[RMDB]
RNA sequence: GGGAACGACUCGAGUAGAGUCGAAAAGCCGAUGAAUUGCCGAGAAGCCUGGCUCGAAAUCGUCGACGCAUCGACGACGGGCCUGCCAUGAGACCGUAACGAGGACAUGUCGCCUCGAAUGGCGUCGUAUAACAUGAGUGGUUCGCCACUCAUGUAAGAUGACUGCAGUAUUCGUACUGCAGUCAUCAAAAGAAACAACAACAACAAC
Reactivity to DMS in 0.01 (KOAc 150mM, MgCl2 10mM, bicine 150mM(pH8.5), 24C), signal-to-noise 1, nucleotides 027 to 156: g010c050c020g050a080u030g000a170a120u000u000g020c000c000g000a140g000a100a100g020c020c030u040g030g060c010u000c010g000a060a150a090u000c000g000u000c000g010a090c140g030c180a190u000c000g000a050c000g010a090c000g000g020g030c000c010u010g070c000c050a100u000g000a130g030a060c030c030g010u000a130a140c010g000a090g000g020a150c050a120u000g010u000c040g010c010c030u000c010g000a030a050u020g000g010c010g000u000c030g040u010a040u010a100a150c000a010u010g000a010g000u000g020g000u000u000c300g010c010c000a000c030u010c010a000u000g010u000a050a130
Reactivity to 2A3 in 0.01 (KOAc 150mM, MgCl2 10mM, bicine 150mM(pH8.5), 24C), signal-to-noise 4, nucleotides 027 to 156: g070c030c020g020a020u100g040a050a240u190u130g040c060c060g040a040g000a120a010g020c030c060u050g010g000c000u000c010g060a160a140a080u000c010g000u000c000g030a060c130g040c230a210u120c000g000a000c000g000a010c000g000g000g000c000c000u010g000c010c000a030u120g020a010g020a120c020c030g030u070a050a020c010g020a040g010g050a040c060a080u180g090u190c080g020c030c010u060c060g000a040a070u040g000g010c030g010u050c030g000u060a100u050a180a020c000a010u000g000a000g000u000g000g020u050u050c120g000c060c000a000c000u000c000a000u000g000u010a000a020

This 207-nucleotide RNA was probed chemically with DMS and 2A3. The DMS profile rests on 1,998 reads. Conditions: 150 mM KOAc, 10 mM MgCl2 and 150 mM bicine (pH 8.5), 24 C.